[RMDB]
RNA sequence: GGGAACGACUCGAGUAGAGUCGAAAAGAUAUGGAAUCAGGAUGGUAGCAACAGCCUCUGUCGGAAACGACAGAGGACAUGCUACCAUCUGAUUCCUAAGUCAAAGGACGUGCUUCGGCACGUCCAAUCCUAGGCUUGUGUUCGCACAAGCCUAGGAAAAAGAAACAACAACAACAAC
Reactivity to DMS in 0.01 (KOAc 150mM, MgCl2 10mM, bicine 150mM(pH8.5), 24C), signal-to-noise 1, nucleotides 027 to 126: g000a070u020a300u000g000g000a000a020u010c030a010g020g000a000u000g010g030u000a000g010c000a090a050c230a230g010c000c020u000c020u000g000u000c000g010g010a090a170a300c000g020a010c000a000g000a000g000g000a030c200a110u000g000c000u000a000c000c000a010u000c000u010g010a030u020u000c000c000u000a040a120g000u020c030a150a150a150g030g000a000c000g040u000g000c010u040u000c300g000g000c030a010c030g000u000c000c000a070a010
Annotation: Structure probing data (DMS) for a 177-nucleotide construct. For DMS, 928 sequencing reads were counted. DMS (dimethyl sulfate) methylates the pairing face of unpaired adenines and cytosines. Source: RMDB library TTRDES, as collected in RNAgym.